RNA sequence: GGGAACGACUCGAGUAGAGUCGAAAACCCACGUACGAAAGUACGAAGAGCUAAUCUACGGAUUAGCUCAAGAAGAGGUCGUGAGACCUCUUCAACCAGAGUCUUCGGACUCUGGAACGUGAGUCGUACGCGACUCACGAUCCUCAGAAGAAUAGGCUUGUUGUUUUACAGUGUUAGUGAUCCAUUCCCUUUGACGAUCCCUAGGUGGAGAUGGGGCAUGAGGAUCCUCCAGGGGAAAAGCUCACUACCACUGGGCAACAACCCUAACAGCUGAGUUCGCUCAGCUGAAAAGAAACAACAACAACAAC
Reactivity to 2A3 in 0.01 (KOAc 150mM, MgCl2 10mM, bicine 150mM(pH8.5), 24C), signal-to-noise 5, nucleotides 027 to 266: c000c000c010a000c000g000u010a000c010g030a230a040a080g000u000a000c000g000a160a040g000a000g000c000u000a000a000u000c000u020a030c280g040g000a000u010u000a000g000c000u000c000a000a020g010a000a000g000a000g010g010u010c010g040u050g060a070g000a020c000c010u000c000u010u000c000a000a000c000c010a000g000a010g020u000c010u110u210c260g140g000a000c000u000c000u000g000g020a030a010c000g000u000g000a000g000u010c010g000u040a040c280g030c020g130a000c010u000c000a000c000g010a030u130c020c100u170c060a110g090a220a030g060a180a270u070a060g010g010c020u010u010g000u000u000g030u010u110u030u110a090c010a000g000u010g000u000u010a010g010u000g010a010u030c040c040a080u030u040c010c000c010u040u010u010g000a010c010g000a000u020c000c000c010u100a150g160g120u200g150g190a270g040a170u300g070g020g020g000c020a020u110g060a130g120g010a000u000c000c010u000c000c010a000g040g000g000g000a010a020a040a000g010c000u000c000a000c000u000a000c000c000a000c020u000g000g000g000c010a000a000c000a000a000c000c000c000u040a070a040
Reactivity to DMS in 0.01 (KOAc 150mM, MgCl2 10mM, bicine 150mM(pH8.5), 24C), signal-to-noise 2, nucleotides 027 to 266: c010c000c030a300c030g000u000a000c010g000a150a110a160g010u010a000c000g000a110a120g000a000g000c000u010a000a000u000c000u000a150c130g000g020a010u000u000a000g000c000u030c000a000a120g010a010a010g000a040g040g000u010c000g000u000g010a150g000a020c000c000u000c000u000u000c000a160a180c090c000a020g000a040g060u000c000u010u020c200g000g000a000c000u000c040u000g000g010a040a030c000g020u000g000a040g010u000c000g060u030a080c070g040c000g020a020c030u000c000a010c000g010a030u020c080c080u010c160a160g000a150a110g000a140a160u020a010g010g000c300u010u000g000u000u000g000u000u000u010u020a090c010a000g040u000g010u000u000a000g000u000g000a010u000c010c110a300u000u000c010c010c000u000u000u000g000a020c210g000a010u010c010c000c030u010a110g010g000u000g000g000a100g030a090u000g000g020g010g010c010a050u020g010a160g010g000a030u000c000c070u000c000c100a060g020g000g000g000a000a040a190a230g000c160u000c000a020c000u000a020c000c000a020c000u000g010g000g020c000a010a030c000a000a010c200c030c000u010a050a150